Source: RMDB library RNAMAK, as collected in RNAgym. An RNA of 207 nucleotides, treated with DMS and 2A3 and read out base by base. For DMS, 1,865 sequencing reads were counted.

RNA sequence: GGGAACGACUCGAGUAGAGUCGAAAAUGACCUUCGGGUCAGCACUAGCGUACUACAGUAAGACAGAUCCCACCUGGGAGUAGGCUCCCAAAUAGGAGCCUACGUUGAUCAGGAGGGAUCAAUGACGCUGUAUCGCCCAGAUCGGAUUCGUCCGAAAAGAGCCUACAUUUUUCGAAAUGUAGGCUCUAAAAGAAACAACAACAACAAC
Reactivity to DMS in 0.01 (KOAc 150mM, MgCl2 10mM, bicine 150mM(pH8.5), 24C), signal-to-noise 1, nucleotides 027 to 156: u010g000a030c000c020u000u000c300g040g030g000u000c010a010g000c070a090c050u010a030g010c100g060u020a070c060u000a040c020a060g000u000a080a260g020a250c040a180g000a030u000c000c000c010a060c040c010u000g000g000g000a050g020u000a010g010g010c000u000c010c000c040a040a080a150u010a080g010g020a050g000c000c000u000a000c000g010u000u000g010a070u000c010a060g010g010a150g000g010g020a010u010c000a010a040u000g000a150c210g000c000u000g020u000a040u010c000g020c000c030c030a220g000a170u010c040g020g000a070u000u010c150g010u000c000c030g000a100a070a170
Reactivity to 2A3 in 0.01 (KOAc 150mM, MgCl2 10mM, bicine 150mM(pH8.5), 24C), signal-to-noise 2, nucleotides 027 to 156: u030g020a020c020c000u050u010c300g130g000g000u000c000a020g010c050a120c070u110a010g000c020g030u150a050c040u000a000c010a000g010u120a200a010g100a110c040a020g040a010u000c010c000c010a030c010c010u000g010g000g000a020g010u000a000g000g020c000u000c000c030c030a110a130a060u190a050g020g010a000g030c050c000u000a000c000g020u060u020g000a000u000c000a000g000g020a030g040g000g000a000u000c010a000a000u020g000a000c050g010c040u000g010u010a060u300c020g010c010c060c020a040g110a150u080c050g010g000a000u050u070c160g080u030c060c010g070a110a090a010
The RNA was probed in 150 mM KOAc, 10 mM MgCl2 and 150 mM bicine (pH 8.5) at 24 C.